[RMDB]
RNA sequence: GGGAACGACUCGAGUAGAGUCGAAAAGCCUAGAUAUGUACUGUGUAGAGUUCUGGCUGAAAUACGGUGCACAGAGGUACGCAUUACUUAGGAACCAGUCGCUUGAUCCGUACCCAGUAGUUCCAAUCUGCUCUCACUGGUUAAUUGCACGAUUGGACGUGUCCUACACAUUCGUGUGUAGGACACGAAAAGAAACAACAACAACAAC
Reactivity to 2A3 in 0.01 (KOAc 150mM, MgCl2 10mM, bicine 150mM(pH8.5), 24C), signal-to-noise 2, nucleotides 027 to 156: g060c030c030u040a040g060a100u200a040u150g080u030a030c040u040g010u020g010u130a040g040a060g150u120u040c090u080g070g030c040u040g050a060a070a020u150a030c070g050g000u040g030c050a040c010a100g050a040g010g040u020a010c020g030c050a050u100u030a030c030u110u100a070g040g040a020a070c010c000a030g040u130c040g090c220u120u110g030a020u050c040c040g010u020a050c000c010c010a020g040u130a040g030u090u040c000c000a000a000u000c000u000g000c010u010c000u000c050a020c010u010g090g000u060u100a080a050u100u060g000c010a020c130g000a010u010u020g020g000a010
Reactivity to DMS in 0.01 (KOAc 150mM, MgCl2 10mM, bicine 150mM(pH8.5), 24C), signal-to-noise 1, nucleotides 027 to 156: g000c000c010u010a040g020a200u000a030u010g000u000a020c020u000g000u010g000u000a140g000a150g040u000u010c040u000g020g040c080u040g000a070a170a130u000a070c050g060g000u000g000c040a080c070a100g010a150g000g030u000a040c020g010c060a080u010u000a060c080u000u000a080g000g000a060a010c020c020a110g030u000c080g020c110u020u010g010a070u010c140c000g070u020a010c030c000c000a210g030u010a090g020u010u000c010c010a000a050u000c030u010g020c010u000c010u000c050a110c100u000g000g000u020u000a080a090u000u000g000c010a020c110g000a090u000u010g020g000a180